RNA sequence: GGGAACGACUCGAGUAGAGUCGAAAAAUGAGGAAGAUGCGUCGCCUAUUAAAAUGUCUGGCGGCUGUUACAUUUGCUUUCUAGCACUUUUCUAUUCUCGUUUCCUUUUUUUGUACCUUCCCCUUUUUAUAUAACCGAGAUUCGUCUCGGUUAUAUAAAAAGAAACAACAACAACAAC
Reactivity to 2A3 in 0.01 (KOAc 150mM, MgCl2 10mM, bicine 150mM(pH8.5), 24C), signal-to-noise 2, nucleotides 027 to 126: a000u110g010a050g070g030a010a040g030a060u050g050c090g060u010c010g010c000c010u160a180u300u290a150a200a080a140u280g090u100c070u030g000g010c000g040g000c060u070g040u000u070a060c040a000u060u040u160g020c010u080u270u220c100u120a030g000c020a010c020u000u090u140u000c050u020a240u100u040c070u010c090g060u000u050u000c010c060u000u030u060u020u010u070u230g040u090a120c000c030u000u050c000c000c020c000u000u000u010u000
Structure probing data (2A3) for a 177-nucleotide construct. Values cover nucleotides 27 to 126. 2A3 adducts were read by reverse transcription with SuperScript II with manganese. The 2A3 profile rests on 461 reads.